[RMDB]
RNA sequence: GGGAACGACUCGAGUAGAGUCGAAAAUUCCAGCUCGGCGAGCGUCGCGCGGCGCUGCUGCAGUUAAAACGCCCGUAGUUGGCCCCCCGCCGCCACGAGGAAACGGGAGCGCUCCAGGCAGGCCCGUCACUACCAUGUAAUUCGUUACAUGGUAGUGAAAAGAAACAACAACAACAAC
Reactivity to DMS in 0.01 (KOAc 150mM, MgCl2 10mM, bicine 150mM(pH8.5), 24C), signal-to-noise 2, nucleotides 027 to 126: u000u000c000c000a130g000c030u010c050g000g050c060g020a140g020c010g020u000c040g030c110g010c100g000g010c010g000c000u010g010c010u000g010c060a030g000u000u040a080a230a300a210c200g000c080c020c040g000u010a100g010u030u000g040g060c020c030c040c050c000c090g030c010c020g020c060c040a070c100g040a130g000g000a010a100a070c020g000g000g010a160g000c050g000c030u010c020c050a100g020g000c040a090g000g000c010c000c000g000u020
Reactivity to 2A3 in 0.01 (KOAc 150mM, MgCl2 10mM, bicine 150mM(pH8.5), 24C), signal-to-noise 5, nucleotides 027 to 126: u040u010c000c000a010g020c020u020c000g060g000c070g090a090g010c010g040u060c030g030c030g030c140g080g000c020g010c030u030g000c000u010g000c020a050g000u090u140a080a180a050a090c070g060c000c010c010g110u150a080g050u050u070g070g000c020c020c000c000c000c000g010c010c010g020c010c010a040c030g030a060g010g070a050a090a020c020g010g010g020a050g040c030g000c020u040c020c020a030g040g010c000a010g040g040c010c020c000g020u010